[RMDB]
RNA sequence: GGGAACGACUCGAGUAGAGUCGAAAAGAUAUGGAGUCGCUUGGGAGAAUACGUGUCGGAAACGACACUGGGUAUUCGAAGAACAAGGACUCCUAAGUCAAAAGCGAAUGACUUCGGUCAUUCGCAACAUUCAAAUGACGUUCGCGUCAUUUGAAUGAAAAGAAACAACAACAACAAC
Reactivity to 2A3 in 0.01 (KOAc 150mM, MgCl2 10mM, bicine 150mM(pH8.5), 24C), signal-to-noise 3, nucleotides 027 to 126: g010a000u020a000u080g000g000a010g010u020c040g020c300u020u030g020g000g000a030g000a030a000u040a050c040g000u000g010u000c000g010g000a030a010a010c020g020a020c020a000c000u020g100g150g050u160a040u010u010c020g140a300a010g010a000a000c000a020a000g000g000a000c010u000c000c000u000a000a000g010u000c010a030a030a120a130g000c010g010a000a010u010g010a010c000u060u130c300g110g000u000c010a000u020u000c000g000c000a000a000
Reactivity to DMS in 0.01 (KOAc 150mM, MgCl2 10mM, bicine 150mM(pH8.5), 24C), signal-to-noise 3, nucleotides 027 to 126: g000a020u000a060u000g000g000a030g020u000c000g020c000u000u000g000g000g020a050g000a010a020u000a030c040g000u000g010u000c000g030g000a030a030a030c000g020a010c000a010c000u020g040g030g030u010a030u010u000c010g000a130a180g010a220a260c000a010a010g000g020a010c010u010c000c000u010a010a050g000u010c010a130a080a180a190g010c000g010a010a010u000g000a010c000u000u020c230g030g000u000c000a010u000u000c010g020c010a030a030
An RNA of 177 nucleotides, treated with 2A3 and DMS and read out base by base. Conditions: 150 mM KOAc, 10 mM MgCl2 and 150 mM bicine (pH 8.5), 24 C. DMS adducts were read by reverse transcription with MarathonRT.